Conditions: 150 mM KOAc, 10 mM MgCl2 and 150 mM bicine (pH 8.5), 24 C. Structure probing data (DMS and 2A3) for a 177-nucleotide construct.
[RMDB]
RNA sequence: GGGAACGACUCGAGUAGAGUCGAAAACAUAUGUAUCAAAAGAUGUCCUAGUUGGCCAUCACUGGAAAGAGAGGCGCAUUGGACACGCAAACUCUAUAUGCCCCAGUAUAGGGGAACGCCAGGGCCACCAUACCGAUCGGUUCGCCGAUCGGUAUGGAAAAGAAACAACAACAACAAC
Reactivity to DMS in 0.01 (KOAc 150mM, MgCl2 10mM, bicine 150mM(pH8.5), 24C), signal-to-noise 1, nucleotides 027 to 126: c030a110u000a040u010g020u000a130u020c160a120a060a040a160g020a080u000g000u020c010c020u000a100g020u000u000g050g000c000c000a140u000c060a300c050u030g000g010a060a040a070g010a100g000a080g010g000c080g050c070a120u000u000g060g020a090c090a070c060g000c020a050a070a160c000u000c000u000a070u030a070u000g010c110c000c000c040a230g000u000a080u000a060g000g000g000g000a050a050c080g000c000c020a020g000g000g010c010c000a130
Reactivity to 2A3 in 0.01 (KOAc 150mM, MgCl2 10mM, bicine 150mM(pH8.5), 24C), signal-to-noise 2, nucleotides 027 to 126: c010a040u290a030u280g100u140a130u190c090a030a020a080a080g160a180u080g000u010c000c070u110a120g100u080u100g000g000c000c000a080u120c050a040c020u010g000g060a060a100a000g110a030g000a010g090g000c030g020c080a040u090u180g020g040a010c010a000c010g000c000a090a100a200c020u020c060u010a070u010a060u240g060c040c010c000c000a010g060u130a080u150a140g000g000g010g010a050a000c010g010c000c000a000g020g000g060c050c020a000

Values cover nucleotides 27 to 126.